[RMDB]
RNA sequence: GGGAACGACUCGAGUAGAGUCGAAAAUGAUAGCUGUUCUCUGGUGAUAGCUGUUGAGUAAGAAGAACCAUCAGCUAGGGGUUCACAGAGAGAAGUUUAUUCUCAUGACUGCUCCCACACUAAGAGCGGAUACUACAAAGUUCGCUUUGUAGUAUCCAAAAGAAACAACAACAACAAC
Reactivity to DMS in 0.01 (KOAc 150mM, MgCl2 10mM, bicine 150mM(pH8.5), 24C), signal-to-noise 6, nucleotides 027 to 126: u010g010a060u010a040g010c010u000g000u010u000c000u010c010u010g010g030u010g010a100u000a010g010c010u010g010u000u010g010a130g020u000a070a150g010a170a160g010a120a040c030c000a010u000c010a020g010c010u000a030g010g000g000g010u010u000c030a050c020a030g000a040g010a020g000a040a030g010u000u000u000a060u020u000c080u000c020a080u010g000a120c170u000g000c090u000c010c030c040a160c220a080c180u020a070a090g010a080g020c220
Reactivity to 2A3 in 0.01 (KOAc 150mM, MgCl2 10mM, bicine 150mM(pH8.5), 24C), signal-to-noise 5, nucleotides 027 to 126: u090g010a030u070a040g000c020u010g070u160u030c020u000c000u030g190g050u040g040a070u020a020g000c030u000g010u020u040g100a200g040u110a140a150g080a150a000g040a110a020c010c000a010u010c010a000g000c000u010a010g080g040g050g030u110u060c020a020c020a050g060a010g010a010g010a030a010g010u030u150u130a100u140u040c050u010c030a040u090g060a070c080u050g010c010u020c020c030c010a040c010a020c040u120a140a060g040a010g120c080